[RMDB]
RNA sequence: GGGAACGACUCGAGUAGAGUCGAAAAUCGGUUGUUUCUCUGAAGGCAUAAUCACCCCGUCCGAUGCGGAAGUUCGUGCUUCCGUCGAACGCGAAAGUCGGACGGCGGCCAUGAGUCGCAACGCAAAUAUACAUUUAGUAGUUCGCUACUAAAUGAACCCUUCAAACUGGUUCGCCAGUUUGAAGGGAAAAGAAACAACAACAACAAC
Reactivity to 2A3 in 0.01 (KOAc 150mM, MgCl2 10mM, bicine 150mM(pH8.5), 24C), signal-to-noise 2, nucleotides 027 to 156: u060c030g050g020u000u000g000u000u030u000c000u000c010u080g080a080a060g090g030c080a140u100a140a120u120c060a070c030c010c010c000g000u000c000c000g000a000u040g020c010g010g010a000a000g000u190u300c220g100u300g120c000u000u000c010c000g030u020c030g040a140a040c070g000c040g120a170a080a030g050u010c000g010g000a010c000g000g000c070g010g010c020c010a120u150g000a000g030u010c040g000c070a010a010c080g010c140a070a130a000u110a020u040a050c000a010u000u000u000a000g000u000a010g000u000u030c140g000c130u020a000c010u000a000a000a000u020g000a000a050